[RMDB]
RNA sequence: GGGAACGACUCGAGUAGAGUCGAAAAAUGGUUGUAAGCGGCCCGUCUUGAAACACGGACCAAGGAGUCUAACAUCCACGCGAGUGUUCGGGUGUCAAACCCGUGCGCGCAGUGAAAGCGAACGGAGCCUGUAAUAUUCCUUCGGGAAUAUUACAGGAAAAGAAACAACAACAACAAC
Reactivity to 2A3 in 0.01 (KOAc 150mM, MgCl2 10mM, bicine 150mM(pH8.5), 24C), signal-to-noise 1, nucleotides 027 to 126: a000u090g010g020u040u060g010u060a080a000g040c030g050g000c030c000c010g000u000c020u050u190g090a050a000a020c020a010c000g000g000a010c000c010a030a040g060g020a120g040u000c010u020a030a000c010a120u010c000c020a010c040g000c010g020a060g090u130g050u060u040c000g000g000g020u040g110u200c090a180a050a050c020c010c010g000u000g000c000g040c010g010c020a020g000u050g190a080a020a010g080c050g010a070a000c050g070g050a020g070
Reactivity to DMS in 0.01 (KOAc 150mM, MgCl2 10mM, bicine 150mM(pH8.5), 24C), signal-to-noise 3, nucleotides 027 to 126: a090u000g000g020u000u000g000u010a110a090g010c130g010g010c000c010c020g010u010c040u000u000g020a150a140a100c300a010c040g010g000a030c020c010a100a160g010g000a100g020u000c030u000a100a040c040a070u000c020c020a050c070g030c030g020a100g010u000g010u000u000c010g010g000g010u000g010u010c220a090a140a040c000c000c000g000u000g010c000g010c000g010c100a090g010u010g010a060a040a080g010c050g000a030a050c100g020g000a210g000